This 177-nucleotide RNA was probed chemically with DMS and 2A3.
RNA sequence: GGGAACGACUCGAGUAGAGUCGAAAAGCAUACAACUUCGGUUGUAUGCAACGACAGAGUUGACUGUCAUAAACAACGUAACAUGUGAGUUACAUUAACACAUUGCAGCAGCUUUCGAGCUGCUGAAUAAGUAUGGUGACUUCGGUCACCAUACUUAAAAAGAAACAACAACAACAAC
Reactivity to DMS in 0.01 (KOAc 150mM, MgCl2 10mM, bicine 150mM(pH8.5), 24C), signal-to-noise 2, nucleotides 027 to 126: g010c020a000u000a000c010a000a010c000u010u010c210g060g010u000u000g000u010a000u010g000c020a040a030c190g000a020c010a000g010a080g040u000u000g010a150c020u000g000u000c080a140u010a090a110a100c080a060a060c070g010u010a020a000c020a130u010g020u010g010a130g000u010u010a010c070a100u000u000a050a050c120a170c180a070u010u010g000c000a010g000c000a010g010c010u000u000u020c120g010a010g010c000u000g020c000u000g010a010a050
Reactivity to 2A3 in 0.01 (KOAc 150mM, MgCl2 10mM, bicine 150mM(pH8.5), 24C), signal-to-noise 2, nucleotides 027 to 126: g000c000a000u000a000c020a010a000c010u000u060c220g140g000u000u000g020u000a020u000g020c000a000a000c030g000a020c000a000g040a010g010u000u040g090a170c000u010g010u010c010a010u160a030a070a020c040a020a020c060g020u020a020a010c000a030u150g120u160g290a130g090u070u070a010c000a030u020u180a130a020c090a000c020a120u090u240g050c020a010g010c000a000g000c000u090u110u190c170g060a000g000c000u010g020c010u000g000a000a000
The data come from the RNA Mapping Database (RMDB), library M2PK50. High 2A3 reactivity points to a flexible backbone, as in loops and unpaired stretches. For DMS the reverse transcriptase was MarathonRT.